Source: RMDB library RNAMAK, as collected in RNAgym. Chemical mapping of a 207-nucleotide RNA with 2A3 and DMS. The DMS profile rests on 2,738 reads. The reactions ran in a buffer of 150 mM KOAc, 10 mM MgCl2 and 150 mM bicine (pH 8.5), at 24 C. 2A3 adducts were read by reverse transcription with SuperScript II with manganese.

RNA sequence: GGGAACGACUCGAGUAGAGUCGAAAAAAAAAACGCUGGGCAAGACCGAGACGGACGUUCUAGUACUACUGAAGCGCGCACGGUAGUAGGAACGAUUCCGUCGUUUGACGUCUUGCCUGUGCUGAAGCGCGCACGGCAACCGAAAGGUGCGAAAAAACAUACCAUACAACUUCGGUUGUAUGGUAUGAAAAGAAACAACAACAACAAC
Reactivity to 2A3 in 0.01 (KOAc 150mM, MgCl2 10mM, bicine 150mM(pH8.5), 24C), signal-to-noise 2, nucleotides 027 to 156: a000a010a000a010a000a000c000g000c020u050g020g040g000c010a000a020g000a000c010c010g030a040g000a050c030g000g000a010c010g000u000u010c020u050a190g190u060a060c000u000a000c000u020g040a250a010g010c000g000c000g000c010a010c030g030g020u020a010g020u020a080g000g070a000a000c000g030a060u180u030c000c000g000u000c010g000u000u020u090g020a010c010g000u000c000u000u000g000c000c000u000g000u000g000c000u000g030a100a030g000c010g000c000g020c010a000c000g010g000c010a030a020c000c010g040a100a040a050g020g000u020g030c040g000a150a030a010a010a000a020
Reactivity to DMS in 0.01 (KOAc 150mM, MgCl2 10mM, bicine 150mM(pH8.5), 24C), signal-to-noise 1, nucleotides 027 to 156: a030a130a060a020a000a130c000g010c030u000g030g000g010c000a000a020g010a060c000c010g010a050g000a040c000g000g000a100c000g010u010u000c000u020a040g010u000a020c000u000a000c010u020g010a040a040g010c010g040c030g000c010a300c060g020g010u000a020g040u000a040g030g000a060a010c000g020a210u030u010c030c020g000u000c000g030u010u000u010g000a220c240g000u000c000u000u000g000c000c000u010g040u010g010c030u000g020a050a030g000c030g020c060g000c010a300c050g020g020c010a070a090c000c030g020a120a110a140g030g010u000g000c010g020a020a040a050a090a060a130